[RMDB]
RNA sequence: GGGAACGACUCGAGUAGAGUCGAAAAUGAGGAUCAGCUCAAGAAUGGUAAGUAUGGUAUCGCCUACACAGACGGUACUGAACGAAUCACUCAGUUGAACCGACCUGCUGAGAACAACAUGCUGGCACAGAUUGAGAAGCUCGAAAGCUCACUCUACCCUAUAACGCGCGUUCGCGCGCGUUAUAGGAAAAGAAACAACAACAACAAC
Reactivity to 2A3 in 0.01 (KOAc 150mM, MgCl2 10mM, bicine 150mM(pH8.5), 24C), signal-to-noise 2, nucleotides 027 to 156: u120g020a020g070g010a010u020c030a020g080c030u060c070a020a070g110a050a050u040g030g030u070a040a020g020u030a020u220g000g000u030a010u020c000g010c000c000u060a100c120a020c040a070g020a020c000g000g000u030a000c010u020g010a090a010c010g030a050a090u060c010a030c010u000c010a010g010u060u020g040a070a010c030c010g050a070c000c050u010g000c030u050g000a040g020a140a050c050a010a020c010a060u040g000c010u010g030g010c030a030c000a100g070a040u030u070g070a080g010a230a000g030c030u050c150g070a120a020a040g010c010u030c030a050c040u030c020u050a080c000